[RMDB]
RNA sequence: GGGAACGACUCGAGUAGAGUCGAAAAUGAAACAUGGUUACCAUAUACUAAGGCACAAGGUUGCCAUGAGUGCCUUAGUAAAUAUAAAAGCUGAGCGUUAGGAAAAACCUAAUGCUCAGCAAAAAAAUCUAUAUUGACUGUUCGCAGUCAAUAUAGAAAAAGAAACAACAACAACAAC
Reactivity to DMS in 0.01 (KOAc 150mM, MgCl2 10mM, bicine 150mM(pH8.5), 24C), signal-to-noise 1, nucleotides 027 to 126: u010g010a160a100a100c110a050u010g000g030u010u000a140c050c030a050u000a130u000a010c000u000a000a010g000g030c010a010c000a150a100g000g020u020u010g010c000c070a010u000g010a180g000u000g010c000c000u000u000a010g030u000a030a060a060u020a060u020a080a090a070a140g020c010u000g000a010g000c000g020u000u000a000g000g000a130a230a040a300a190c000c000u000a000a000u000g030c000u000c010a000g000c000a000a000a020a050a020a020a050